[RMDB]
RNA sequence: GGGAACGACUCGAGUAGAGUCGAAAAACUUCACUUCUCGUUUAUAAUCUUAUGAUGACAUAGCAGGAGGUUGCUAUGUUGCCUGGCAGAGGCUUUGUAUCUGAUCGUUGGUCUUGAUGGGAGACGCCGUCAGUCUCAAGUUCGCUUGAGACUGACGAAAAGAAACAACAACAACAAC
Reactivity to DMS in 0.01 (KOAc 150mM, MgCl2 10mM, bicine 150mM(pH8.5), 24C), signal-to-noise 1, nucleotides 027 to 126: a100c110u000u020c050a070c120u000u020c040u010c070g010u010u010u010a070u010a080a030u000c010u030u020a090u010g030a010u020g000a000c000a010u000a000g020c010a020g000g050a130g000g000u010u000g010c060u000a010u000g020u000u000g000c000c000u020g050g010c030a000g000a010g010g000c000u010u080u060g000u000a010u000c000u000g020a050u000c010g020u000u000g000g000u000c160u020u000g000a070u000g010g050g000a080g040a110c040g020c190
Reactivity to 2A3 in 0.01 (KOAc 150mM, MgCl2 10mM, bicine 150mM(pH8.5), 24C), signal-to-noise 2, nucleotides 027 to 126: a010c070u190u140c010a050c060u060u000c010u020c010g020u030u110u080a280u170a300a070u050c010u090u180a090u300g170a170u240g010a080c000a000u000a030g000c030a010g000g130a040g210g100u240u000g020c020u000a000u000g000u000u060g040c000c000u000g000g000c000a000g000a000g000g000c000u230u300u290g020u000a070u000c000u010g000a110u040c000g020u040u120g020g000u000c000u020u110g030a120u100g030g010g020a010g000a000c000g040c040
The record gives the reactivity of an RNA of 177 nucleotides to DMS and 2A3. Conditions: 150 mM KOAc, 10 mM MgCl2 and 150 mM bicine (pH 8.5), 24 C.